RNA sequence: GGGAACGACUCGAGUAGAGUCGAAAAGUCUCACGAGUGCAGAGACAAAGGUAGUUGACUCCGGCGCUACCAGUACUCGAAGGAAUGCGAAAGAGUUCAAGUAUUCCAACCGGAGAAGAACUCAAAAAGCGUAAUAAUAGUUCGCUAUUAUUACGCUAAAAGAAACAACAACAACAAC
Reactivity to DMS in 0.01 (KOAc 150mM, MgCl2 10mM, bicine 150mM(pH8.5), 24C), signal-to-noise 6, nucleotides 027 to 126: g000u000c000u000c010a220c010g020a050g010u000g010c050a120g030a100g040a110c210a090a150a090g000g000u000a000g000u020u000g000a120c010u000c000c020g000g000c060g020c020u000a010c010c000a120g010u000a010c010u000c010g010a160a110g010g020a130a080u010g020c080g010a100a100a160g000a150g000u000u010c030a080a190g010u010a050u020u020c040c070a080a170c020c000g000g000a020g010a190a150g010a030a020c050u000c040a020a040a090a100
Reactivity to 2A3 in 0.01 (KOAc 150mM, MgCl2 10mM, bicine 150mM(pH8.5), 24C), signal-to-noise 8, nucleotides 027 to 126: g030u000c000u010c010a030c040g040a030g040u090g020c060a020g050a020g020a280c090a060a040a020g010g000u020a010g000u060u220g040a040c000u010c000c010g010g000c010g010c010u000a000c000c000a000g010u040a010c010u010c010g010a050a020g070g050a120a020u130g080c110g060a130a080a120g050a070g010u030u050c040a090a020g070u050a170u070u090c060c020a060a060c020c010g000g040a000g010a010a020g010a020a010c020u020c050a030a050a010a080

Structure probing data (DMS and 2A3) for a 177-nucleotide construct. The reactions ran in a buffer of 150 mM KOAc, 10 mM MgCl2 and 150 mM bicine (pH 8.5), at 24 C. DMS adducts were read by reverse transcription with MarathonRT.